This 207-nucleotide RNA was probed chemically with 2A3 and DMS.
The DMS profile rests on 5,677 reads.
RNA sequence: GGGAACGACUCGAGUAGAGUCGAAAACGCAUCCGUAAGCUCGCAGAGCGUUAUACCGGGACUCAGCCAGCAAGCGUAUCAACCAGAAAGGUCAUCGUUAUGCUCACCCAAUUGCUUGACGAGAGCAAUGAUGCUUAUAGACGAACAGCGGAGGAAGGGUUAUCAUUACUUUCGAGUAAUGAUAACCAAAAGAAACAACAACAACAAC
Reactivity to 2A3 in 0.01 (KOAc 150mM, MgCl2 10mM, bicine 150mM(pH8.5), 24C), signal-to-noise 8, nucleotides 027 to 156: c030g010c010a030u030c020c010g050u070a070a070g020c020u010c030g060c060a020g000a010g070c020g020u050u030a100u050a090c050c070g010g000g040a080c100u080c190a030g080c110c010a020g000c020a030a020g010c000g050u100a050u170c040a030a050c020c010a030g250a180a120a030g050g000u040c040a050u050c030g010u010u060a130u160g000c000u010c030a060c000c000c000a050a070u050u040g000c010u030u040g040a120c160g030a050g010a000g070c000a010a010u070g010a020u040g000c000u040u040a160u090a110g080a080c030g000a050a010c000a030g040c000g030g010a020g020g050a030a080g100
Reactivity to DMS in 0.01 (KOAc 150mM, MgCl2 10mM, bicine 150mM(pH8.5), 24C), signal-to-noise 3, nucleotides 027 to 156: c060g030c050a110u000c000c040g010u000a080a120g030c020u010c010g010c050a300g030a080g000c030g010u000u000a040u000a100c100c000g000g030g040a080c070u000c050a170g010c050c020a130g030c020a050a090g020c010g020u000a100u010c110a070a100c010c000a160g020a080a080a130g030g000u000c060a110u000c030g020u000u000a070u010g020c020u000c050a100c050c010c000a040a130u000u020g000c020u000u000g030a150c080g010a290g000a040g000c010a060a090u010g000a040u000g020c010u000u000a070u000a140g030a170c030g000a040a040c020a170g000c000g000g000a040g030g020a120a130g010

For 2A3 the reverse transcriptase was SuperScript II with manganese. The RNA was probed in 150 mM KOAc, 10 mM MgCl2 and 150 mM bicine (pH 8.5) at 24 C. Values cover nucleotides 27 to 156.